This 177-nucleotide RNA was probed chemically with DMS and 2A3. Source: RMDB library OK2TST, as collected in RNAgym.

RNA sequence: GGGAACGACUCGAGUAGAGUCGAAAAUGAACCACACAGGUCUAAAUGUUCAUUCUUUGCCUAAAUGUUGGCAUGUGAGGAAUGGCAGUUACCUGAAUGAGUCAGACUUUAGAAAUGAGUGGAUCAAAAAUGCUUUUAGGUUCGCCUAAAAGCAUUUAAAAGAAACAACAACAACAAC
Reactivity to DMS in 0.01 (KOAc 150mM, MgCl2 10mM, bicine 150mM(pH8.5), 24C), signal-to-noise 7, nucleotides 027 to 126: u010g010a040a080c000c020a030c070a140c010a010g000g010u000c060u000a000a030a040u010g010u000u000c000a010u000u000c000u000u000u000g020c010c010u010a050a110a120u020g020u010u000g010g010c000a030u000g020u000g020a090g010g000a020a020u000g000g010c030a070g010u010u000a110c100c010u000g000a070a150u000g010a130g010u000c060a060g010a160c160u000u000u000a030g000a040a050a050u000g000a070g040u000g000g000a070u010c040a010a090
Reactivity to 2A3 in 0.01 (KOAc 150mM, MgCl2 10mM, bicine 150mM(pH8.5), 24C), signal-to-noise 5, nucleotides 027 to 126: u040g000a000a010c000c000a010c000a000c000a030g000g030u020c020u070a040a070a070u080g020u240u230c010a010u000u000c020u050u040u050g010c010c000u130a240a270a240u300g030u230u030g020g000c000a010u090g100u100g150a120g030g010a010a010u010g010g000c010a050g020u060u070a040c020c000u000g020a040a060u130g040a030g140u020c020a020g030a080c000u060u050u090a030g030a040a050a040u080g010a030g010u010g030g000a010u050c040a000a040